[RMDB]
An RNA of 177 nucleotides, treated with 2A3 and DMS and read out base by base. It was measured as part of the RMDB library OK2TRN. For 2A3, 1,108 sequencing reads were counted. Conditions: 150 mM KOAc, 10 mM MgCl2 and 150 mM bicine (pH 8.5), 24 C. For DMS, 789 sequencing reads were counted.
RNA sequence: GGGAACGACUCGAGUAGAGUCGAAAAUCAACCGGACUCACGAAAAUUGACCUGGUUUGAGACAAUCAACGGAUACGGAAACAUGCCACAGAUCGUUAUGAAAACUAGCGCAGGCUAUUGGUCAAAACCCACGCAUUUAUUUCGAUAAAUGCGUGGGAAAAGAAACAACAACAACAAC
Reactivity to 2A3 in 0.01 (KOAc 150mM, MgCl2 10mM, bicine 150mM(pH8.5), 24C), signal-to-noise 1, nucleotides 027 to 126: u050c010a000a010c040c000g040g010a040c050u100c040a040c010g100a150a060a080a110u030u020g060a020c000c000u000g070g020u030u000u130g030a020g000a010c070a020a110u110c050a010a070c040g000g070a040u060a090c000g050g030a090a070a000c000a040u130g040c010c000a060c030a010g030a100u080c030g000u020u020a040u060g060a050a160a000a010c120u020a020g060c020g010c050a010g000g010c020u060a070u070u160g010g000u060c000a030a020a010a080
Reactivity to DMS in 0.01 (KOAc 150mM, MgCl2 10mM, bicine 150mM(pH8.5), 24C), signal-to-noise 2, nucleotides 027 to 126: u000c070a080a050c000c010g010g010a150c200u000c000a030c090g000a060a040a080a100u040u000g010a050c060c000u000g000g010u000u010u010g000a050g020a080c160a010a030u010c070a010a100c170g000g000a080u000a110c120g000g000a070a030a070c180a070u000g020c000c030a070c200a060g000a090u010c020g040u000u000a060u020g010a070a050a140a070c190u000a030g040c000g010c100a090g010g010c030u000a030u000u000g010g000u010c100a040a040a150a160